Chemical mapping of a 177-nucleotide RNA with 2A3 and DMS. The data come from the RNA Mapping Database (RMDB), library M2PK50. The DMS profile rests on 6,865 reads. DMS adducts were read by reverse transcription with MarathonRT. For 2A3, 14,599 sequencing reads were counted.

RNA sequence: GGGAACGACUCGAGUAGAGUCGAAAAGUGACACUGUUCGCAGUGUCACAAAGUGGUGGAUCUAGAACCACAAUAACUACAUCAAAGAUCUAGUCUAGAUCAAAAGCAUACAGUUCGCUGUAUGCAACAGGGUAAAUUAGUUCGCUAAUUUACCCUGAAAAGAAACAACAACAACAAC
Reactivity to 2A3 in 0.01 (KOAc 150mM, MgCl2 10mM, bicine 150mM(pH8.5), 24C), signal-to-noise 7, nucleotides 027 to 126: g000u000g000a000c000a000c010u010g030u060u070c180g020c120a000g000u000g000u000c000a000c000a010a010a000g010u010g020g000u020g030g020a040u010c020u030a030g010a030a030c000c010a010c020a010a020u130a040a010c110u170a040c030a150u170c120a170a150a090g100a100u070c060u120a040g160u020c030u040a010g010a010u010c010a010a070a020a030g010c000a000u000a000c000a000g000u030u070c130g050c120u000g000u000a000u000g000c000a000a000
Reactivity to DMS in 0.01 (KOAc 150mM, MgCl2 10mM, bicine 150mM(pH8.5), 24C), signal-to-noise 5, nucleotides 027 to 126: g000u000g000a010c000a010c000u000g020u010u010c210g020c000a000g030u000g020u000c000a000c000a030a080a070g010u000g000g010u000g010g010a020u000c010u000a030g000a040a030c000c000a020c010a120a110u000a060a120c080u000a060c160a080u010c140a100a090a110g000a100u010c110u000a070g000u010c010u000a020g000a020u000c030a090a060a080a090g000c000a000u010a010c000a010g010u010u020c230g010c000u000g010u000a010u000g010c000a070a080